The record gives the reactivity of an RNA of 177 nucleotides to DMS. The RNA was probed in 150 mM KOAc, 10 mM MgCl2 and 150 mM bicine (pH 8.5) at 24 C.
[RMDB]
RNA sequence: GGGAACGACUCGAGUAGAGUCGAAAACGAAUGUUGUCCGUUAUGUACUGAUAGUUGCUGUGCGGUCGCAGGUUGAUCUGCUGCAGCUUCUGUACAGGAAAGGGCUGUUGCGCACAGAGAUACCAGGCUUAGGCUACCCUUUCGAGGGUAGCCUAAGAAAAGAAACAACAACAACAAC
Reactivity to DMS in 0.01 (KOAc 150mM, MgCl2 10mM, bicine 150mM(pH8.5), 24C), signal-to-noise 1, nucleotides 027 to 126: c070g010a120a130u000g000u000u020g000u010c090c100g010u010u010a100u020g000u000a050c010u020g000a030u000a030g010u020u020g030c000u000g010u000g000c030g020g000u000c080g030c040a080g000g020u000u030g000a070u000c010u000g000c030u000g000c000a030g000c020u000u000c020u000g010u000a090c130a100g000g030a040a120a130g000g000g020c010u000g000u010u000g030c080g000c070a110c080a020g010a060g030a100u020a050c030c030a050g030g000
Overview
Values are in units of 0.01, from 0 to 300, in steps of 10. Reactivities are given for positions 27 through 126.